Notes
An RNA of 207 nucleotides, treated with DMS and 2A3 and read out base by base. DMS adducts were read by reverse transcription with MarathonRT. 2A3 adducts were read by reverse transcription with SuperScript II with manganese.
RNA sequence: GGGAACGACUCGAGUAGAGUCGAAAACACAGCCACACUGUCUGGGCAGACCUGAAUAAAAUCCUGACUUUCAUUAACAAAGAAGAAGGGUGGGUCGGACCACUGUGGGCUGCCACAGGGUGCUCCAUGCCCCGAGAGUUGUCACAUGGACAAAAGACCUAAAUUAUUAUUUCGAUAAUAAUUUAGGAAAAGAAACAACAACAACAAC
Reactivity to DMS in 0.01 (KOAc 150mM, MgCl2 10mM, bicine 150mM(pH8.5), 24C), signal-to-noise 2, nucleotides 027 to 156: c110a120c020a070g010c010c030a090c030a040c040u000g010u010c040u000g030g020g030c000a060g000a020c010c000u000g020a160a200u020a090a100a150a100u010c000c010u000g000a300c020u000u000u010c060a270u000u000a170a220c090a090a100a120g000a120a100g010a120a120g000g010g050u000g020g050g030u000c010g010g010a060c000c020a030c020u000g010u000g010g010g040c030u000g020c000c020a060c030a070g000g000g010u010g010c080u000c050c060a090u000g010c020c000c000c010g000a140g000a240g010u000u000g010u000c000a120c060a090u000g010g010a090c020a030a070a070a100g000a180
Reactivity to 2A3 in 0.01 (KOAc 150mM, MgCl2 10mM, bicine 150mM(pH8.5), 24C), signal-to-noise 2, nucleotides 027 to 156: c080a000c000a010g050c020c000a290c010a000c070u030g040u150c020u040g020g050g000c020a010g000a020c000c000u060g080a170a070u180a200a120a010a040u110c020c000u020g080a130c020u150u110u050c050a090u060u220a210a070c090a160a150a040g030a000a010g010a000a010g010g020g000u070g000g060g000u020c030g070g150a020c010c020a010c020u000g020u010g000g030g000c030u030g030c010c000a050c010a030g000g000g010u020g000c000u050c010c000a020u010g000c000c000c000c010g020a050g000a000g090u050u110g060u100c020a010c020a100u000g040g000a000c030a040a160a000a000g070a020